[RMDB]
RNA sequence: GGGAACGACUCGAGUAGAGUCGAAAAGGACUGAGACACCGCCCAGGCUGCUACGCCAGGCAGCAGCGGAGAAUAUUGCUCCAUGGGCGGCAGCCUGAUGCAGCGACGCGGUGUGCGGGAUGAAGGCAUUAUAUAUGAUUUUCGAAUCAUAUAUAAUAAAAGAAACAACAACAACAAC
Reactivity to DMS in 0.01 (KOAc 150mM, MgCl2 10mM, bicine 150mM(pH8.5), 24C), signal-to-noise 9, nucleotides 027 to 126: g010g000a110c020u010g000a100g000a050c030a040c010c010g000c000c120c020a050g000g010c000u000g000c000u010a150c130g020c030c010a070g010g010c160a030g010c010a040g010c200g000g020a090g010a120a150u050a110u020u010g000c000u000c020c000a110u030g010g000g010c000g000g000c010a010g010c000c000u000g000a120u020g010c130a080g010c100g000a110c150g000c000g000g010u000g000u000g010c040g000g000g000a080u020g010a110a080g010g010c120
Reactivity to 2A3 in 0.01 (KOAc 150mM, MgCl2 10mM, bicine 150mM(pH8.5), 24C), signal-to-noise 5, nucleotides 027 to 126: g050g010a040c050u020g030a010g010a040c010a000c010c000g000c000c000c000a010g060g000c000u000g000c000u060a030c030g030c010c000a010g020g000c030a000g000c000a000g050c040g070g070a080g030a090a040u210a060u110u100g030c000u000c000c000a050u070g070g000g000c000g000g000c000a000g000c000c000u010g000a020u040g010c020a020g020c000g070a020c020g000c000g000g000u010g010u010g000c000g000g020g000a030u060g080a050a010g020g000c020
Chemical mapping of a 177-nucleotide RNA with DMS and 2A3.
For DMS, 50,979 sequencing reads were counted.
Source: RMDB library OK1LIB, as collected in RNAgym.
The 2A3 profile rests on 11,753 reads.